[RMDB]
RNA sequence: GGGAACGACUCGAGUAGAGUCGAAAAGAGACGUUCGCGUCUCGACGAGGAAAAGUUAUAACGGUUAUGUUCAUAAUAACAGUCGUAAGCGUAUAGCUUUUCCCCUUGAAAGUGUAGUUCGCUACACACUUAGUGGACAAUUCGUUGUCCACUAAGUAAAAGAAACAACAACAACAAC
Reactivity to 2A3 in 0.01 (KOAc 150mM, MgCl2 10mM, bicine 150mM(pH8.5), 24C), signal-to-noise 8, nucleotides 027 to 126: g010a000g000a000c010g010u040u060c200g040c000g100u000c000u010c000g000a030c020g030a150g010g000a020a010a010a000g000u010u010a030u040a200a080c030g040g110u010u010a010u020g070u080u040c050a070u090a300a050u120a210a160c070a060g040u030c010g010u010a010a000g070c000g000u010a000u010a010g000c000u000u000u000u010c000c000c000c010u040u130g180a160a080a040g020u010g000u010a010g000u020u100c170g020c080u010a000c010a000c010
Reactivity to DMS in 0.01 (KOAc 150mM, MgCl2 10mM, bicine 150mM(pH8.5), 24C), signal-to-noise 3, nucleotides 027 to 126: g000a000g000a010c000g020u010u000c240g030c030g020u010c000u000c000g000a090c200g010a050g000g000a010a010a010a010g010u000u000a000u000a080a050c010g010g000u000u010a000u000g000u010u010c040a090u020a110a110u020a120a170c280a070g000u000c020g020u000a020a010g010c010g000u010a020u000a000g010c000u000u000u000u000c000c000c030c020u010u000g010a070a060a100g020u000g010u000a000g010u000u010c250g020c010u000a000c010a000c010